[RMDB]
RNA sequence: GGGAACGACUCGAGUAGAGUCGAAAAUGGGCUCUUAGGCGCUACUUCUUCAUGGUGAGCAAUGCGCCGGCAAUAGCAAACAGCCACGAAUCCUUAGCAAGUGGCAGCCCGCUUUGCGACGAACAAACCAUAGGACGUUGUUCGCAACGUCCUAUGGAAAAGAAACAACAACAACAAC
Reactivity to DMS in 0.01 (KOAc 150mM, MgCl2 10mM, bicine 150mM(pH8.5), 24C), signal-to-noise 3, nucleotides 027 to 126: u000g000g010g010c020u000c150u000u000a100g020g020c020g000c010u000a050c070u000u010c040u010u020c150a130u000g020g020u020g020a060g000c130a060a110u020g000c020g030c030c010g020g020c190a050a050u000a030g020c080a030a080a090c210a090g020c000c000a010c020g010a110a120u010c070c060u010u000a140g010c120a120a190g000u000g000g000c010a070g010c030c030c080g000c130u000u000u010g000c030g010a130c160g020a080a050c170a070a060a120
Reactivity to 2A3 in 0.01 (KOAc 150mM, MgCl2 10mM, bicine 150mM(pH8.5), 24C), signal-to-noise 3, nucleotides 027 to 126: u060g030g030g000c030u030c040u150u220a120g040g010c000g040c010u040a040c060u060u030c010u070u060c070a210u260g160g010u180g060a030g000c060a070a120u090g020c000g000c010c000g000g000c040a020a110u030a100g000c020a020a030a100c040a040g000c000c000a020c000g040a070a060u050c040c030u160u150a060g040c110a170a040g000u010g030g000c010a010g000c000c000c010g000c000u020u030u030g040c040g050a110c030g070a090a040c070a120a080a020

Chemical mapping of a 177-nucleotide RNA with DMS and 2A3. As a SHAPE reagent, 2A3 marks flexible, mostly unpaired nucleotides at the ribose 2'-OH. For 2A3, 2,146 sequencing reads were counted. The reactions ran in a buffer of 150 mM KOAc, 10 mM MgCl2 and 150 mM bicine (pH 8.5), at 24 C. For 2A3 the reverse transcriptase was SuperScript II with manganese.